RNA sequence: GGGAACGACUCGAGUAGAGUCGAAAAAAAAAGAUAUGGAAUGGAACUACACGCGACGGACGCGACGAAGCAUCGUCGGAAACGACGAUGCAGAGCGUCCCAAGCGUGCCAUUCCUAAGUCAAAAAAUCUUCACCUAUAGUUCGCUAUAGGUGAAGAAAAAGAAACAACAACAACAAC
Reactivity to DMS in 0.01 (KOAc 150mM, MgCl2 10mM, bicine 150mM(pH8.5), 24C), signal-to-noise 3, nucleotides 027 to 126: a000a060a100a090a070g000a020u010a250u030g000g010a090a000u000g000g010a150a020c080u030a300c010a000c000g010c000g000a300c300g000g000a000c000g030c010g000a070c190g010a100a120g010c010a010u000c000g010u000c000g020g010a000a020a060c010g030a000c000g020a010u000g010c000a000g000a050g010c010g010u000c000c000c000a000a260g020c000g010u010g000c000c010a000u000u000c000c000u010a000a100g000u010c000a000a040a090a120a070a090
Reactivity to 2A3 in 0.01 (KOAc 150mM, MgCl2 10mM, bicine 150mM(pH8.5), 24C), signal-to-noise 1, nucleotides 027 to 126: a000a060a010a000a070g040a030u060a030u090g000g000a000a010u010g040g000a060a020c130u300a040c300a010c000g000c000g010a010c000g040g030a000c000g080c020g140a300c080g010a040a000g010c010a010u010c000g000u020c000g020g000a030a040a010c010g000a000c000g000a000u020g030c030a000g010a010g000c000g010u000c000c000c000a010a000g000c000g010u000g000c000c000a010u000u040c000c000u010a020a010g000u000c030a000a000a020a090a090a230